[RMDB]
RNA sequence: GGGAACGACUCGAGUAGAGUCGAAAAUCUGUCCAACCUUACCACGCUGCUCGUUUGUGGAGAGCGCUUUGACGCACGGGAUGCGCAGAAUGCGAGCCGACUAGUGACAGGCAAGGUCGUUAAUGCCCAGGGUGUAAUCCUUCGGGAUUACACCCUGAAAAGAAACAACAACAACAAC
Reactivity to DMS in 0.01 (KOAc 150mM, MgCl2 10mM, bicine 150mM(pH8.5), 24C), signal-to-noise 2, nucleotides 027 to 126: u020c060u000g000u020c140c050a130a060c060c020u010u010a130c030c050a090c120g050c040u000g000c000u010c030g000u000u010u010g020u020g040g020a130g010a210g010c010g020c060u000u010u010g030a160c040g020c020a050c080g020g020g010a300u000g000c070g030c080a060g000a030a020u010g000c020g020a160g010c040c030g000a040c050u000a070g040u010g020a080c090a040g010g000c060a050a080g020g010u000c030g030u000u010a050a090u000g000c070c050
Reactivity to 2A3 in 0.01 (KOAc 150mM, MgCl2 10mM, bicine 150mM(pH8.5), 24C), signal-to-noise 2, nucleotides 027 to 126: u010c010u050g070u090c040c010a000a050c010c030u000u060a030c000c010a040c080g010c010u030g010c010u010c040g150u080u110u130g100u120g050g060a070g020a000g050c040g050c000u110u110u110g010a100c070g100c000a030c070g140g050g030a090u110g000c020g000c000a020g060a040a020u030g000c000g010a030g020c010c010g020a070c050u040a040g040u010g090a050c020a000g010g000c010a020a030g100g010u030c020g080u090u110a110a070u130g010c020c000
The record gives the reactivity of an RNA of 177 nucleotides to DMS and 2A3. Conditions: 150 mM KOAc, 10 mM MgCl2 and 150 mM bicine (pH 8.5), 24 C. Source: RMDB library OK2TST, as collected in RNAgym. For DMS the reverse transcriptase was MarathonRT. High 2A3 reactivity points to a flexible backbone, as in loops and unpaired stretches.